This 177-nucleotide RNA was probed chemically with 2A3. Reactivities are given for positions 27 through 126. The reactions ran in a buffer of 150 mM KOAc, 10 mM MgCl2 and 150 mM bicine (pH 8.5), at 24 C.
[RMDB]
RNA sequence: GGGAACGACUCGAGUAGAGUCGAAAAAGCGUUCAAGCUCGACAACAAAACAAUGUUUUAAUUCCAAUAUUAAAAGAAUUAACUCCUAGCCUGACUAUUGGACUAAUCUAUACAAACAUAGAAGCAACGCCGUGGUAAUAUUCGUAUUACCACGGCGAAAAGAAACAACAACAACAAC
Reactivity to 2A3 in 0.01 (KOAc 150mM, MgCl2 10mM, bicine 150mM(pH8.5), 24C), signal-to-noise 2, nucleotides 027 to 126: a010g020c000g060u120u080c030a070a000g030c010u110c080g040a030c000a300a000c000a000a190a000a000c000a150a070u030g000u010u030u010u010a080a000u050u050c000c000a020a020u080a070u110u300a040a150a080a030g020a040a090u070u180a090a100c000u150c080c000u080a010g180c050c040u000g000a070c020u100a020u120u000g010g000a000c010u050a020a210u000c030u000a100u020a020c030a060a060a000c000a000u020a020g060a060a020g060c110a170a060